[RMDB]
RNA sequence: GGGAACGACUCGAGUAGAGUCGAAAAGGAGAUAUUCAGUUAUCCCCCUCUUUAAAGGAGGCUGGUAACGCGUCGAUACAAGAGAUAUUGCUCUAUAAACAGUAACGUCGUUAUCUGUCAUGCCACCUAAGAUGCAGAUAUUCGUAUCUGCAUCUUAAAAAGAAACAACAACAACAAC
Reactivity to 2A3 in 0.01 (KOAc 150mM, MgCl2 10mM, bicine 150mM(pH8.5), 24C), signal-to-noise 9, nucleotides 027 to 126: g070g020a090g020a040u050a040u090u170c090a120g300u060u030a030u030c000c000c000c000c000u010c020u030u120u120a100a110a020g010g000a010g010g000c010u010g000g010u000a000a000c000g000c010g010u030c030g040a030u040a160c080a070a030g010a000g020a020u070a150u300u250g110c010u000c000u020a100u110a120a160a040c070a050g060u100a030a020c010g070u100c010g000u190u000a010u010c010u020g040u030c030a060u180g050c000c000a040c010c010
Reactivity to DMS in 0.01 (KOAc 150mM, MgCl2 10mM, bicine 150mM(pH8.5), 24C), signal-to-noise 9, nucleotides 027 to 126: g010g010a060g010a010u000a010u010u010c300a130g000u010u000a020u000c000c010c010c010c020u000c020u000u000u010a070a110a120g010g010a070g000g010c030u000g000g000u000a010a010c010g000c050g020u000c070g010a180u020a070c160a140a030g000a020g000a260u030a100u020u020g020c010u000c000u000a080u020a080a080a120c170a090g010u020a060a030c010g000u020c010g010u000u000a000u000c020u010g010u000c080a090u020g010c020c020a100c050c040
Chemical mapping of a 177-nucleotide RNA with 2A3 and DMS. 2A3 adducts were read by reverse transcription with SuperScript II with manganese. It was measured as part of the RMDB libraries RFM100 and RFMREP. For DMS the reverse transcriptase was MarathonRT. Conditions: 150 mM KOAc, 10 mM MgCl2 and 150 mM bicine (pH 8.5), 24 C.